Record summary: Chemical mapping of a 177-nucleotide RNA with 2A3 and DMS. For DMS, 17,180 sequencing reads were counted. Conditions: 150 mM KOAc, 10 mM MgCl2 and 150 mM bicine (pH 8.5), 24 C. The data come from the RNA Mapping Database (RMDB), library M2PK50. DMS adducts were read by reverse transcription with MarathonRT.
RNA sequence: GGGAACGACUCGAGUAGAGUCGAAAAUUCAAGCGAUUCGUCGCUUGAACCUGAGGAGACUCAAGCAAAAUUGUUGCCUUUUGCUUUUGCUUUCCUCUUUUAAGUAGUAGUGCUUCGGCACUACUAACUUCACUACGAUAUUCGUAUCGUAGUGAAGAAAAGAAACAACAACAACAAC
Reactivity to 2A3 in 0.01 (KOAc 150mM, MgCl2 10mM, bicine 150mM(pH8.5), 24C), signal-to-noise 8, nucleotides 027 to 126: u030u000c000a000a000g000c000g020a010u040u090c190g040u010c010g140c000u000u000g000a000a010c000c010u010g000a010g010g000a010g010a010c000u010c010a000a010g010c000a010a020a060a070u150u250g140u180u180g110c020c010u010u020u010u010g000c000u020u010u010u010g040c070u010u020u000c000c000u000c000u060u030u010u030a060a010g000u010a000g000u000a000g000u000g000c000u020u070c210g080g000c000a000c000u000a000c000u000a000a000
Reactivity to DMS in 0.01 (KOAc 150mM, MgCl2 10mM, bicine 150mM(pH8.5), 24C), signal-to-noise 6, nucleotides 027 to 126: u000u000c000a000a000g000c000g010a030u000u020c210g010u000c000g020c010u000u000g000a010a050c020c010u000g010a010g010g000a010g000a020c000u000c040a010a000g010c000a000a010a020a030u010u000g010u010u000g010c130c140u000u000u000u000g010c000u000u000u000u000g000c170u000u000u000c000c000u000c000u000u000u000u010a070a110g010u000a010g010u000a000g010u000g000c000u000u020c190g020g000c000a010c000u000a000c000u000a010a080